[RMDB]
RNA sequence: GGGAACGACUCGAGUAGAGUCGAAAAUUUUUCCUUGCUGUGAUCCAUUUCUCGAGGGUCUCCUCCCUUGUUCCCCUUCGUCCUCUCCUCGUCUCGGAUUGGCUCAUUCUCAGGUCGGGCGAGGGUCCUAUCGUCGUCUUCGGACGACGAAAAAGAAACAACAACAACAAC
Reactivity to 2A3 in 0.01 (KOAc 150mM, MgCl2 10mM, bicine 150mM(pH8.5), 24C), signal-to-noise 3, nucleotides 027 to 129: u070u060u000u020u010c020c000u060u050g000c010u120g010u060g010a030u020c060c040a090u010u090u090c030u030c050g050a050g030g000g040u000c010u020c000c000u030c020c020c000u000u070g000u010u020c000c000c000c000u000u050c010g010u000c000c020u020c020u050c030c010u000c020g050u000c050u030c010g050g050a060u030u090g040g000c000u020c120a210u290u030c110u000c000a000g010g000u040c000g010g000g000c000g000a000g010g010g020u000c010c010u120a080
Reactivity to DMS in 0.01 (KOAc 150mM, MgCl2 10mM, bicine 150mM(pH8.5), 24C), signal-to-noise 2, nucleotides 027 to 129: u020u050u030u010u010c020c010u000u060g000c000u000g020u050g020a070u030c040c060a160u000u000u000c060u030c090g020a200g000g000g000u010c070u010c000c000u020c020c040c030u010u010g010u010u000c020c000c000c100u040u000c080g020u000c070c030u020c100u020c040c030u010c050g040u020c030u020c020g050g000a050u030u000g010g070c080u020c090a100u040u030c000u060c040a000g020g020u030c000g050g050g000c060g000a090g030g020g030u040c020c030u010a060